RNA sequence: GGGAACGACUCGAGUAGAGUCGAAAAUUGUCAAUGUUUAGGGGCAAAGGCCUGAUUAUGCAGAUGCUUGGUGUAAGCUUAUGCUUGUACAACUUUUGCUAUUGGCCUCCACCCCUAAAUCUUGGCAUCUCCAGCAUGACUUCGGUCAUGCUGGAGAAAAAGAAACAACAACAACAAC
Reactivity to 2A3 in 0.01 (KOAc 150mM, MgCl2 10mM, bicine 150mM(pH8.5), 24C), signal-to-noise 3, nucleotides 027 to 126: u040u030g000u000c000a000a010u010g000u030u000u010a000g000g030g000g030c100a130a030a030g000g000c010c030u100g050a130u110u210a090u300g010c000a000g010a030u000g030c160u030u100g160g000u030g030u040a010a000g000c010u150u230a140u300g010c000u000u040g010u000a000c000a000a000c000u000u000u000u000g000c000u040a040u120u110g000g000c010c000u010c000c020a010c000c000c000c000u000a000a000a000u000c000u000u000g000g000c000a000